[RMDB]
RNA sequence: GGGAACGACUCGAGUAGAGUCGAAAAGUAUUCGAAUUCUGUCACACCAGUUUUGUGACAGUAUUAAACCAGAGUUAGGUAAUUUGAAUACCUGAGCUUUUGUGCUUUCAGAAACAAAAAAGGAGGGGGUAAUAUUGUCUUUCGAGACAAUAUUACCAAAAGAAACAACAACAACAAC
Reactivity to 2A3 in 0.01 (KOAc 150mM, MgCl2 10mM, bicine 150mM(pH8.5), 24C), signal-to-noise 3, nucleotides 027 to 126: g000u000a030u010u030c010g000a010a000u040u020c010u000g010u020c000a010c010a020c060c090a180g040u110u110u170u040g010u000g000a000c020a010g000u010a010u030u170a020a020a000c000c020a040g040a030g300u150u170a060g010g030u020a020a070u000u030u060g030a030a010u010a020c010c000u050g040a030g040c000u170u220u230u290g100u150g030c000u070u160u070c050a010g090a020a160a020c060a010a100a070a090a000a080g190g080a050g030g090g020
Reactivity to DMS in 0.01 (KOAc 150mM, MgCl2 10mM, bicine 150mM(pH8.5), 24C), signal-to-noise 3, nucleotides 027 to 126: g010u000a020u000u010c010g010a010a010u000u000c000u010g000u000c000a010c000a080c160c130a220g000u000u000u000u000g020u000g000a010c000a010g020u000a020u010u010a060a080a030c000c010a150g010a120g010u020u020a090g000g000u000a020a030u000u000u010g000a030a020u000a010c000c050u000g010a080g010c030u000u000u000u010g010u000g000c020u000u010u020c100a080g010a100a060a040c030a010a040a080a060a090a110g000g010a060g020g010g000